[RMDB]
RNA sequence: GGGAACGACUCGAGUAGAGUCGAAAAGACACGACGGAGACGUCGUGUCAAAGAGUGGGAAACCACUCAAAGAGCCACAGCUUCGGCUGUGGCUCAAGGCGUGGCACCGUCCACGGAACAAACGGAAACUGAUAUUACCAUUCGUGGUAAUAUCAGUAAAAGAAACAACAACAACAAC
Reactivity to 2A3 in 0.01 (KOAc 150mM, MgCl2 10mM, bicine 150mM(pH8.5), 24C), signal-to-noise 5, nucleotides 027 to 126: g000a000c000a000c010g000a000c000g020g020a060g030a060c010g010u010c000g010u010g000u000c000a010a000a000g000a000g000u010g000g010g010a020a050a070c010c000a000c000u010c000a020a030a010g000a000g000c000c000a000c000a010g030c000u070u090c220g140g000c000u000g000u000g000g010c000u000c000a000a010g000g000c020g000u000g000g000c040a030c120c020g130u180c020c010a000c010g050g070a050a020c030a030a020a000c010g020g030a140a050
Reactivity to DMS in 0.01 (KOAc 150mM, MgCl2 10mM, bicine 150mM(pH8.5), 24C), signal-to-noise 6, nucleotides 027 to 126: g000a020c000a010c000g010a010c000g010g010a260g000a190c010g020u000c000g020u000g010u000c000a020a070a090g000a010g030u000g000g000g000a150a100a240c000c000a000c000u000c000a030a080a110g010a010g000c000c000a010c000a000g010c000u000u010c260g030g010c000u000g020u000g000g000c010u000c000a010a030g010g010c020g010u000g000g000c000a160c020c000g000u010c000c000a000c000g010g020a030a160c170a000a020a010c010g000g000a100a140
Structure probing data (2A3 and DMS) for a 177-nucleotide construct. Source: RMDB library OK2TRN, as collected in RNAgym. 2A3 is a SHAPE reagent: it acylates the 2'-hydroxyl of flexible nucleotides of all four kinds. For 2A3 the reverse transcriptase was SuperScript II with manganese. For 2A3, 20,177 sequencing reads were counted. The reactions ran in a buffer of 150 mM KOAc, 10 mM MgCl2 and 150 mM bicine (pH 8.5), at 24 C.